Chemical mapping of a 207-nucleotide RNA with 2A3.

RNA sequence: GGGAACGACUCGAGUAGAGUCGAAAACUCCACCAGCACCUCGUUGGACUCCAACGUGGUCGUGAAGUAGUCCACGAAGAACUCGGCGGCCGGAACGGUCCGCCUCCCGGAGGGGCCCGCCACGACCAUCUCGGCGUCCAUGGCCAGCGCCGGGGCCACAUACAGUUUCAUUCGUGAAACUGUAUGUAAAAGAAACAACAACAACAAC
Reactivity to 2A3 in 0.01 (KOAc 150mM, MgCl2 10mM, bicine 150mM(pH8.5), 24C), signal-to-noise 1, nucleotides 027 to 156: c010u040c030c010a040c040c010a060g060c060a040c050c050u060c050g040u080u040g020g030a110c050u080c020c010a070a060c040g040u020g010g010u000c000g000u000g020a090a060g010u120a010g000u010c060c010a110c200g090a080a120g030a090a060c110u050c210g000g010c000g030g000c040c040g180g140a250a170c130g030g040u070c060c000g000c030c000u020c060c010c030g040g040a110g070g020g040g000c000c070c020g020c050c020a010c000g010a000c000c000a030u000c020u040c070g000g000c040g050u020c030c010a020u020g030g010c000c020a060g040c050g000c090c000g030g000g030g010c030c000